This 207-nucleotide RNA was probed chemically with DMS and 2A3. Reactivities are given for positions 27 through 156.

RNA sequence: GGGAACGACUCGAGUAGAGUCGAAAACGCUGGGUUGGAGAUCUUUGCUCUCAUCGAUCGUCUGAAGCGCGCACGGACGGGAGAGAGUUUGGAUCCACUCAACCUGUGCUGAAGCGCGCACGGCAACCGAAAGGUGCGUCCUCGAUCUUCGGAUCGACUUAAUAUGUAUUUUCGAAUACAUAUUAAGAAAAGAAACAACAACAACAAC
Reactivity to DMS in 0.01 (KOAc 150mM, MgCl2 10mM, bicine 150mM(pH8.5), 24C), signal-to-noise 2, nucleotides 027 to 156: c040g040c020u010g000g020g040u000u010g030g030a140g010a010u010c000u010u010u000g000c010u030c000u010c010a250u000c130g020a060u010c020g000u010c010u000g010a060a090g030c030g040c010g000c000a300c010g000g000a050c010g020g000g010a080g000a090g000a030g010u000u000u000g020g010a050u000c020c050a110c080u020c020a030a040c000c060u000g000u000g000c040u010g000a040a050g000c000g060c020g110c000a300c010g000g000c000a070a160c060c020g010a100a110a280g010g010u000g010c040g000u000c040c010u000c010g020a010u000c000u000u010c230g060g000a050u010c000g010a170
Reactivity to 2A3 in 0.01 (KOAc 150mM, MgCl2 10mM, bicine 150mM(pH8.5), 24C), signal-to-noise 5, nucleotides 027 to 156: c020g000c010u050g020g020g020u030u010g080g110a180g000a090u010c000u020u030u050g020c000u000c000u000c010a200u300c050g040a040u020c010g040u000c010u030g060a230a040g010c020g000c000g020c010a020c010g010g000a000c000g010g030g000a050g000a000g000a000g010u010u020u060g010g000a010u000c020c030a090c100u300c020a000a010c000c010u010g020u030g000c000u020g010a130a040g000c000g000c000g000c000a010c000g010g010c000a000a030c010c020g050a090a020a020g020g000u020g010c010g020u050c000c020u000c010g000a000u000c010u050u110c270g130g010a010u000c000g000a000